The record gives the reactivity of an RNA of 177 nucleotides to DMS. The RNA was probed in 150 mM KOAc, 10 mM MgCl2 and 150 mM bicine (pH 8.5) at 24 C.
RNA sequence: GGGAACGACUCGAGUAGAGUCGAAAAUAACCAGCAGAGUUGAGGAGUGAGGCCACUGAGCCACACAGAUGCACCCAGCCUGACUCACAAGGCAAGGUUUAGGCCUCUGUUCAGAUGUGUCUGUGUAGUCACCCGUAUACUUCGGUAUACGGGUGACAAAAGAAACAACAACAACAAC
Reactivity to DMS in 0.01 (KOAc 150mM, MgCl2 10mM, bicine 150mM(pH8.5), 24C), signal-to-noise 1, nucleotides 027 to 126: u040a150a170c030c000a150g000c100a090g000a150g000u020u000g000a130g020g030a030g070u000g050a020g030g000c020c030a110c200u000g000a110g000c030c070a090c070a010c000a050g010a030u000g010c040a030c030c010c110a170g020c030c010u000g010a100c070u000c050a050c130a150a040g000g000c020a070a120g000g000u000u000u010a070g020g000c030c030u000c030u000g010u010u000c130a150g000a050u000g010u000g010u010c010u000g040u010g040u040a030
It was measured as part of the RMDB library OK2TST. For DMS, 703 sequencing reads were counted.